[RMDB]
RNA sequence: GGGAACGACUCGAGUAGAGUCGAAAAUCGGGUCAACGAUCCGACCGCCAAGCACACCGCCAAGAUUGUCUUUGGCGACACCAAGAACUUCAAGGAGGAAUUCGUCUACACGGAUCUCUCUGAGAUGUUCCCCGGUUAUAAGUUCGAUCUUGGUAAGCAAAUCCUAUCAAUUCGUUGAUAGGAUUUGAAAAGAAACAACAACAACAAC
Reactivity to DMS in 0.01 (KOAc 150mM, MgCl2 10mM, bicine 150mM(pH8.5), 24C), signal-to-noise 4, nucleotides 027 to 156: u000c020g010g000g000u000c000a110a130c180g020a030u010c000c010g010a030c050c010g030c050c040a070a140g010c070a070c030a090c060c030g000c010c020a030a070g010a070u000u000g010u000c020u000u000u000g010g020c050g000a080c070a100c040c010a080a110g010a040a010c020u010u040c000a050a300g000g000a080g030g020a010a030u000u000c020g030u000c120u000a170c170a110c030g030g010a000u000c000u000c020u000c000u010g010a300g010a020u000g020u000u000c010c030c050c040g010g020u000u000a120u000a050a090g020u000u000c060g010a070u000c010u000u000g010g020u000a080a150g000
Reactivity to 2A3 in 0.01 (KOAc 150mM, MgCl2 10mM, bicine 150mM(pH8.5), 24C), signal-to-noise 5, nucleotides 027 to 156: u030c010g000g010g010u030c090a210a080c270g020a010u010c000c010g020a030c020c000g010c010c010a060a030g090c060a040c030a040c080c060g000c000c000a000a000g010a020u020u050g020u050c030u050u060u100g130g010c080g050a010c010a010c020c020a030a040g000a010a010c010u020u000c010a010a010g010g010a010g000g020a040a030u010u010c010g020u050c150u220a090c080a010c160g000g000a010u000c030u000c000u000c010u050g000a010g000a010u010g010u010u000c010c010c010c040g020g000u070u040a160u030a130a020g050u110u140c040g010a020u000c000u000u010g010g010u050a060a020g030

The record gives the reactivity of an RNA of 207 nucleotides to DMS and 2A3. DMS adducts were read by reverse transcription with MarathonRT. For 2A3, 9,875 sequencing reads were counted. 2A3 adducts were read by reverse transcription with SuperScript II with manganese. For DMS, 6,851 sequencing reads were counted.